Structure probing data (DMS and 2A3) for a 177-nucleotide construct. 2A3 adducts were read by reverse transcription with SuperScript II with manganese. The 2A3 profile rests on 9,213 reads.
RNA sequence: GGGAACGACUCGAGUAGAGUCGAAAACAGACCGCGCUCGGUGUCAUCAAACGCGGUGUAUUCGCGCAUGAGCUGCAGGAAUCGGACUUGGUUGAAUACACCCCAGAUCACGUUUUCCAGCCCGAGCCUAUUGCUGCAUAUUCGUAUGCAGCAAUAGAAAAGAAACAACAACAACAAC
Reactivity to DMS in 0.01 (KOAc 150mM, MgCl2 10mM, bicine 150mM(pH8.5), 24C), signal-to-noise 6, nucleotides 027 to 126: c150a150g000a160c050c040g020c160g010c000u000c030g010g010u010g000u000c080a130u000c180a030a030a050c040g000c130g020g000u000g010u010a020u000u000c010g010c060g010c060a070u000g010a090g010c030u000g010c130a110g020g030a100a080u000c040g000g000a060c040u000u000g010g000u000u010g010a040a030u000a030c040a040c030c010c050c120a090g010a110u010c150a120c020g000u000u000u000u010c060c090a240g010c040c000c010g000a030g010c050
Reactivity to 2A3 in 0.01 (KOAc 150mM, MgCl2 10mM, bicine 150mM(pH8.5), 24C), signal-to-noise 6, nucleotides 027 to 126: c030a020g120a060c010c030g020c010g000c040u000c010g060g030u140g110u130c050a100u040c030a060a050a040c040g010c050g010g010u010g010u020a030u000u030c010g010c010g000c070a030u080g060a150g110c020u050g020c060a110g120g230a100a130u140c020g020g020a010c020u020u060g070g010u110u260g050a030a010u040a020c010a020c000c010c010c010a030g030a120u120c030a010c090g000u030u010u060u040c020c010a010g000c020c000c000g010a010g000c000